[RMDB]
RNA sequence: GGGAACGACUCGAGUAGAGUCGAAAACAAACAACGAUCGGAACAACAUUGUCAUUAGCACCUAUAUAUCUAUAUGUCCCCACCCCCUAAUGACAAUGCCCAUAUAGAUAUAAGACGAUCGGAACAAGGGUUAUAGAUAGUUCGCUAUCUAUAACCCAAAAGAAACAACAACAACAAC
Reactivity to 2A3 in 0.01 (KOAc 150mM, MgCl2 10mM, bicine 150mM(pH8.5), 24C), signal-to-noise 6, nucleotides 027 to 126: c030a010a070a020c040a040a040c000g010a000u020c010g010g060a080a050c040a040a010c000a070u010u030g010u010c000a010u000u020a010g030c050a110c090c080u040a080u060a080u030a050u220c120u100a150u050a080u260g120u080c020c010c010c010a070c000c000c020c000c000u020a000a000u000g000a000c000a000a000u010g000c010c000c000a090u130a010u040a040g200a040u080a020u030a150a080g080a030c010g000a010u000c000g020g020a030a030c050a140a070
Reactivity to DMS in 0.01 (KOAc 150mM, MgCl2 10mM, bicine 150mM(pH8.5), 24C), signal-to-noise 4, nucleotides 027 to 126: c090a070a140a120c140a090a080c000g000a000u000c000g030g000a120a110c230a130a230c060a030u000u000g000u000c010a010u000u000a010g000c120a110c180c120u010a060u000a040u020a050u000c160u020a080u010a000u000g010u000c020c000c010c020a250c030c000c000c040c000u010a000a000u000g010a000c000a010a020u010g010c030c020c050a110u030a130u020a020g020a110u010a080u010a050a100g040a160c000g020a010u010c010g000g000a100a080c240a110a110